[RMDB]
RNA sequence: GGGAACGACUCGAGUAGAGUCGAAAAUGCCUCUUUGUGUCUUCUUUUCCUCCUACCCCUCACGUGCCAGAAAUGGAAAAACUGACUGUAUCUGCAGCCACUAGAAGUAUUUCCUUCCUCUGCGAUCAGCUCAAUAGGUAUUCGUACCUAUUGAGCUAAAAGAAACAACAACAACAAC
Reactivity to DMS in 0.01 (KOAc 150mM, MgCl2 10mM, bicine 150mM(pH8.5), 24C), signal-to-noise 4, nucleotides 027 to 126: u010g000c020c010u000c090u000u000u000g030u010g010u000c040u010u000c030u000u000u000u000c030c020u000c020c030u000a190c060c010c000c030u000c050a080c140g010u010g010c030c040a030g000a050a070a080u000g000g000a060a050a030a100a070c080u010g000a050c020u000g020u000a090u010c130u010g020c030a040g000c020c020a060c130u000a080g010a060a070g020u000a090u010u010u000c020c020u000u000c100c030u000c050u000g020c080g010a110u010c150
Reactivity to 2A3 in 0.01 (KOAc 150mM, MgCl2 10mM, bicine 150mM(pH8.5), 24C), signal-to-noise 2, nucleotides 027 to 126: u100g060c000c000u040c000u060u030u120g110u030g030u010c020u020u020c000u070u100u030u000c000c000u000c030c000u030a090c010c010c000c000u000c010a020c080g030u040g020c020c000a040g020a050a060a010u090g000g000a040a050a060a030a010c030u040g080a010c000u040g000u070a110u040c020u120g000c000a000g050c050c010a060c050u090a040g040a160a030g040u000a070u000u040u020c000c000u030u030c010c020u040c010u020g020c020g100a100u140c030
Source: RMDB library OK2TST, as collected in RNAgym. Chemical mapping of a 177-nucleotide RNA with DMS and 2A3. For 2A3 the reverse transcriptase was SuperScript II with manganese. The RNA was probed in 150 mM KOAc, 10 mM MgCl2 and 150 mM bicine (pH 8.5) at 24 C. DMS adducts were read by reverse transcription with MarathonRT.